[RMDB]
The data come from the RNA Mapping Database (RMDB), libraries RFM100 and RFMREP. Chemical mapping of a 177-nucleotide RNA with 2A3 and DMS.

RNA sequence: GGGAACGACUCGAGUAGAGUCGAAAAGCAGAUGGAAUUGGUGGUGUAGGGGUAAAAUCCGUAGAUAUCACCAAGAAUACCCAUUGCGAAGGCGAUCUGCUGGAACUCAACUGACGCUAAGGCGCGAACACUACAAGGUAUUCGUACCUUGUAGUGUAAAAGAAACAACAACAACAAC
Reactivity to 2A3 in 0.01 (KOAc 150mM, MgCl2 10mM, bicine 150mM(pH8.5), 24C), signal-to-noise 9, nucleotides 027 to 126: g000c010a010g010a060u050g030g030a080a100u020u010g000g000u010g000g020u000g010u030a030g020g010g010g020u010a010a030a010a020u070c020c010g090u210a020g020a070u040a000u020c000a000c000c000a000a000g010a030a040u220a100c010c010c010a040u050u150g030c050g050a070a020g070g020c030g030a060u000c010u030g000c010u010g010g050a060a040c010u010c070a040a090c070u140g060a090c020g000c010u060a070a140g120g000c020g000c020g030a010
Reactivity to DMS in 0.01 (KOAc 150mM, MgCl2 10mM, bicine 150mM(pH8.5), 24C), signal-to-noise 9, nucleotides 027 to 126: g010c010a010g010a030u000g010g010a130a150u000u000g000g010u000g000g010u000g010u000a080g010g010g000g000u010a080a080a140a130u050c000c000g010u010a110g010a030u010a010u000c000a010c000c000a000a010g000a130a120u020a130c110c010c060a130u020u020g010c050g010a100a120g000g010c030g010a050u000c010u000g000c010u000g000g020a160a100c060u010c060a080a090c160u020g000a150c020g010c020u000a080a120g020g010c030g000c030g010a110